[RMDB]
RNA sequence: GGGAACGACUCGAGUAGAGUCGAAAACUCUGGGGAGAAAAGGGUGGAUCGGCAGGGAAGAGUAUAUCCUACGGGAAUCCGUGGUUUCCCCUUAUGUCCAGCCCCUCCCCGGUCCUGGUGAAGGGGGGUCUUCAUUAAUGUUCGCAUUAAUGAAGACAAAAGAAACAACAACAACAAC
Reactivity to DMS in 0.01 (KOAc 150mM, MgCl2 10mM, bicine 150mM(pH8.5), 24C), signal-to-noise 4, nucleotides 027 to 126: c180u000c030u000g020g010g000g010a030g000a070a060a130a130g000g020g040u010g010g010a020u020c080g010g020c300a120g000g000g010a040a050g000a160g000u020a080u000a050u010c110c010u010a020c040g000g000g000a120a070u000c010c000g010u000g000g010u000u000u000c020c000c000c040u000u000a160u020g010u000c000c000a030g010c010c010c040c010u000c010c000c000c000g000g010u000c030c030u000g010g020u010g010a110a080g010g010g010g000g000
Reactivity to 2A3 in 0.01 (KOAc 150mM, MgCl2 10mM, bicine 150mM(pH8.5), 24C), signal-to-noise 4, nucleotides 027 to 126: c040u040c010u010g020g000g010g020a030g030a020a180a070a040g030g030g010u040g000g030a140u220c050g040g050c060a020g010g010g010a060a050g050a050g160u100a040u010a030u250c010c020u060a020c020g000g000g110a290a230u150c020c000g010u010g020g010u020u030u010c020c010c000c000u040u140a050u070g010u000c020c000a090g060c120c000c000c000u010c010c000c000c010g000g000u010c000c010u050g070g000u120g070a080a080g000g000g000g020g010